The record gives the reactivity of an RNA of 207 nucleotides to 2A3 and DMS. The RNA was probed in 150 mM KOAc, 10 mM MgCl2 and 150 mM bicine (pH 8.5) at 24 C. For DMS the reverse transcriptase was MarathonRT. High DMS reactivity at an A or C suggests that its Watson-Crick edge is free.

RNA sequence: GGGAACGACUCGAGUAGAGUCGAAAAUCAAAUCAUGUUUGAAAAGAGUCACUCCAUUGGCUGCAUGGAAUAUUGACUGUAGGGGACCAAGGAGCAAAGCAGAAUGAAUGACCAGUUAGGAAGCUUCUGCAGUUGGAGCAUGAUGACUCAGACAACAAAUGAGUGGAUCAUUCGUGAUCCACUCAUUAAAAGAAACAACAACAACAAC
Reactivity to 2A3 in 0.01 (KOAc 150mM, MgCl2 10mM, bicine 150mM(pH8.5), 24C), signal-to-noise 2, nucleotides 027 to 156: u080c020a060a020a030u090c060a050u120g160u100u090u150g130a080a070a040a070g050a000g000u010c000a000c040u010c000c040a140u050u210g080g000c110u080g000c020a040u100g000g070a060a050u160a090u070u130g060a050c000u030g010u070a030g020g030g010g000a020c020c030a040a040g020g020a050g030c030a050a030a010g000c010a000g040a110a010u120g060a040a040u100g010a120c060c000a010g000u020u020a040g030g030a140a030g010c030u090u060c010u060g000c000a010g000u030u050g000g000a010g000c040a050u110g000a040u030g020a040c010u020c080a010g050a020c030a090a000c010a030
Reactivity to DMS in 0.01 (KOAc 150mM, MgCl2 10mM, bicine 150mM(pH8.5), 24C), signal-to-noise 1, nucleotides 027 to 156: u000c020a070a030a100u000c100a160u000g020u000u000u010g000a060a090a110a180g020a230g000u000c070a050c080u020c000c000a160u010u000g000g040c030u000g070c040a140u050g020g010a070a170u010a070u000u010g000a050c020u010g020u010a100g030g020g060g000a100c040c040a040a020g000g000a070g020c020a040a020a150g010c020a050g010a120a060u000g000a120a000u000g000a130c040c010a120g010u000u050a120g010g020a110a110g000c040u000u000c010u010g010c030a020g020u000u010g050g020a060g000c070a080u000g010a130u000g000a080c070u000c010a170g000a160c030a040a100c070a080